[RMDB]
RNA sequence: GGGAACGACUCGAGUAGAGUCGAAAAGUCGGCGGGCCGGCUACUCUUCUUUUCCUUUCCUCGUCCUCCCCGGUCAGCCUCCAGAGUUCCUCUUCUUCUUCCUUGCUGAGGCUCUUUCCCCCUGCGGUAACUUACUGGUUCGCCAGUAAGAAAAGAAACAACAACAACAAC
Reactivity to 2A3 in 0.01 (KOAc 150mM, MgCl2 10mM, bicine 150mM(pH8.5), 24C), signal-to-noise 9, nucleotides 027 to 129: g070u040c030g010g020c020g010g020g060c020c010g020g020c010u040a070c040u030c030u090u050c010u050u060u030u080c020c000u060u070u070c000c010u030c010g060u030c000c030u040c010c010c000c000g000g010u040c020a010g010c000c000u030c020c020a030g010a000g050u050u060c010c000u020c000u050u010c000u050u010c000u030u050c020c010u040u050g020c020u030g040a060g040g010c000u010c000u040u030u030c000c000c000c000c010u040g040c040g050g010u030a050a030
Reactivity to DMS in 0.01 (KOAc 150mM, MgCl2 10mM, bicine 150mM(pH8.5), 24C), signal-to-noise 9, nucleotides 027 to 129: g040u010c060g010g000c040g020g010g030c040c010g010g000c070u000a060c070u010c040u020u010c040u010u000u010u000c010c050u010u020u000c010c010u010c060g040u000c030c030u020c010c010c010c000g030g010u000c070a060g000c020c000u020c030c040a070g010a110g010u020u010c010c000u020c050u010u000c020u020u020c030u000u000c020c020u000u000g000c050u020g010a110g000g000c040u000c020u000u000u010c020c000c010c030c060u020g020c080g010g010u020a050a100